[RMDB]
RNA sequence: GGGAACGACUCGAGUAGAGUCGAAAACGGACGGGAUUUUAGCCUGGUUGCAAGUUUACCCAUUUCGUGCUGGGUCCUGGACCCAGUUAAGAUGAUAGAAAUAUUAUCGAUUUCUUUACCGUCCGGAAUAUACGCGUAAUUUCGAUUACGCGUAUAUAAAAGAAACAACAACAACAAC
Reactivity to 2A3 in 0.01 (KOAc 150mM, MgCl2 10mM, bicine 150mM(pH8.5), 24C), signal-to-noise 3, nucleotides 027 to 126: c000g010g000a000c010g000g000g060a080u110u100u050u190a030g060c030c030u060g130g000u100u090g040c030a050a070g010u100u130u100a120c000c020c020a020u120u130u120c140g050u060g000c010u000g010g000g000u010c040c160u130g070g010a010c000c000c000a000g000u000u010a030a020g000a010u030g020a020u020a050g050a020a080a010u050a010u080u080a060u080c040g020a040u060u090u050c040u020u170u070a080c000c010g020u000c000c020g010g000a000
Reactivity to DMS in 0.01 (KOAc 150mM, MgCl2 10mM, bicine 150mM(pH8.5), 24C), signal-to-noise 7, nucleotides 027 to 126: c010g010g010a010c010g010g010g010a120u010u000u000u010a100g020c060c050u010g000g020u000u010g010c050a060a090g000u010u010u010a130c010c010c020a130u000u010u010c150g030u000g010c050u000g000g010g010u010c040c170u010g020g010a020c020c000c010a010g010u000u000a060a140g000a010u000g010a030u000a010g000a120a070a110u000a020u000u000a040u000c040g000a150u000u000u000c060u000u000u000a180c010c000g010u000c010c000g010g000a100